The record gives the reactivity of an RNA of 207 nucleotides to DMS and 2A3. It was measured as part of the RMDB library OK3TST.
RNA sequence: GGGAACGACUCGAGUAGAGUCGAAAACGUACGUGGAGACACGUACGACGAGACUUCGGUCUCGAAUUGCGCGAACCGGCGCCGCGCGCGCGCGAGGCGUCGGUGGUCGGCGAGCCCACGGACGCAAAAACUCGCGCGUAAAUAAAUAGCGUUGGGAGUAUAUGUACAUAUUCGUAUGUACAUAUACAAAAGAAACAACAACAACAAC
Reactivity to DMS in 0.01 (KOAc 150mM, MgCl2 10mM, bicine 150mM(pH8.5), 24C), signal-to-noise 1, nucleotides 027 to 156: c020g000u000a000c010g070u000g010g010a300g000a300c000a000c000g000u010a020c010g030a130c010g020a050g030a050c000u000u000c300g020g040u000c000u000c010g020a080a130u000u010g000c010g030c050g000a060a050c000c000g020g000c000g010c000c000g030c010g030c000g030c000g080c050g060c000g010a040g050g000c010g050u000c010g020g070u000g000g000u000c020g020g020c160g000a250g040c220c000c000a030c020g010g020a040c000g240c160a100a100a120a120a300c020u000c000g020c000g020c020g040u000a020a030a080u000a020a040a080u000a030g020c000g050u010u000g000g000g010a140
Reactivity to 2A3 in 0.01 (KOAc 150mM, MgCl2 10mM, bicine 150mM(pH8.5), 24C), signal-to-noise 1, nucleotides 027 to 156: c010g020u010a000c000g000u000g020g010a010g010a000c000a000c000g000u010a010c000g000a030c010g000a000g010a000c050u120u220c300g130g000u000c010u010c000g010a110a160u230u230g000c030g000c000g050a250a250c010c000g010g000c000g000c000c000g000c000g000c010g010c000g000c000g000c000g010a010g020g000c030g020u010c060g050g000u000g000g000u010c020g030g150c160g020a030g000c000c000c000a000c000g050g000a010c000g010c060a150a030a080a060a160c000u000c000g000c000g000c000g010u030a040a000a000u300a010a000a000u010a000g020c000g000u020u020g030g000g000a030
Reactivities are given for positions 27 through 156. For DMS the reverse transcriptase was MarathonRT.